[RMDB]
RNA sequence: GGGAACGACUCGAGUAGAGUCGAAAACACAGUCUCUAUGUAACUAUGCCAUUAAGCCUCAAGAGUGGGGAGGAAAUCAGAUAGUCAAUGGUAUUCUCCAUUUUAAACAUGACACAAAUGAGAAGCCAACCCUCCAUGUAAGGACAUUAUCACCGGACGUGUGCGUAUAAUUCGUUAUACGCACACGAAAAGAAACAACAACAACAAC
Reactivity to DMS in 0.01 (KOAc 150mM, MgCl2 10mM, bicine 150mM(pH8.5), 24C), signal-to-noise 1, nucleotides 027 to 156: c040a090c070a060g030u000c010u020c030u000a120u010g020u010a050a090c020u000a100u000g000c040c080a040u020u000a070a120g020c040c020u020c040a020a140g030a120g020u010g080g020g000g000a090g020g020a060a140a110u000c020a080g040a090u010a050g020u020c090a020a140u000g000g000u000a090u000u010c030u000c020c030a140u000u000u000u010a100a100a130c130a140u000g000a050c080a090c110a020a040a080u000g000a090g000a040a110g000c050c000a090a050c040c020c040u000c020c020a090u040g010u020a080a110g000g080a120c050a090u000u020a070u010c080a140c000c000g010g030a300
Reactivity to 2A3 in 0.01 (KOAc 150mM, MgCl2 10mM, bicine 150mM(pH8.5), 24C), signal-to-noise 4, nucleotides 027 to 156: c080a000c030a030g040u020c010u010c030u060a120u080g060u040a060a130c050u070a110u170g040c000c000a050u150u050a100a030g030c020c010u070c060a070a070g050a030g050u070g010g020g020g000a010g000g000a030a020a070u130c040a020g040a080u090a060g090u070c090a090a060u050g010g010u050a300u140u010c030u010c050c010a030u040u030u010u080a060a140a060c080a090u150g060a090c040a000c010a120a060a040u130g010a020g020a030a010g010c000c000a030a080c000c000c000u000c010c000a020u040g020u070a060a020g030g000a000c020a040u100u140a070u140c060a060c100c000g070g000a020